[RMDB]
RNA sequence: GGGAACGACUCGAGUAGAGUCGAAAAGUGGUUACAUCUAAAGGAAAAUUAAAUUAAGCAAAAAUAGUGUUGCAUCUAAAAAUACAGAAUUAGGCCGGGUGCGGUGGCUCACGCCUGUAAUCUCAGCACUUUGGGAGGCUGAAGCGGGCAGAUCACACCAUAUUUACCAUUUCGAUGGUAAAUAUGGAAAAGAAACAACAACAACAAC
Reactivity to DMS in 0.01 (KOAc 150mM, MgCl2 10mM, bicine 150mM(pH8.5), 24C), signal-to-noise 1, nucleotides 027 to 156: g000u010g000g040u020u010a050c030a060u020c060u010a000a030a130g010g020a080a150a140a080u010u010a050a110a250u000u010a070a130g000c000a010a110a090a090a130u000a030g030u010g000u010u020g000c030a040u010c060u000a020a080a070a140a080u000a160c030a110g010a090a130u000u000a090g010g030c000c000g020g010g030u010g020c030g020g010u000g010g050c030u010c040a040c070g010c000c000u000g040u010a020a040u000c080u020c000a020g030c040a030c060u000u000u010g020g040g010a060g020g000c000u030g000a020a160g030c000g030g020g000c050a110g000a050u000c050a050c090a170
Reactivity to 2A3 in 0.01 (KOAc 150mM, MgCl2 10mM, bicine 150mM(pH8.5), 24C), signal-to-noise 3, nucleotides 027 to 156: g030u030g020g020u040u080a060c060a090u060c050u190a070a070a100g040g010a120a140a080a070u140u120a070a100a120u180u190a160a110g020c050a050a060a090a100a080u110a110g040u050g050u070u050g030c030a050u030c020u160a020a150a000a000a030u090a070c020a000g100a060a100u100u080a060g050g000c030c040g020g000g000u020g000c030g010g000u020g010g010c010u020c040a060c070g010c000c000u020g020u060a080a080u030c010u000c060a010g000c010a030c090u040u100u170g130g010g010a070g030g000c010u000g000a000a020g020c000g000g000g000c000a000g020a060u050c040a010c000a000

The record gives the reactivity of an RNA of 207 nucleotides to DMS and 2A3. The DMS profile rests on 2,098 reads. For 2A3, 1,794 sequencing reads were counted. It was measured as part of the RMDB library OK3TST. The RNA was probed in 150 mM KOAc, 10 mM MgCl2 and 150 mM bicine (pH 8.5) at 24 C.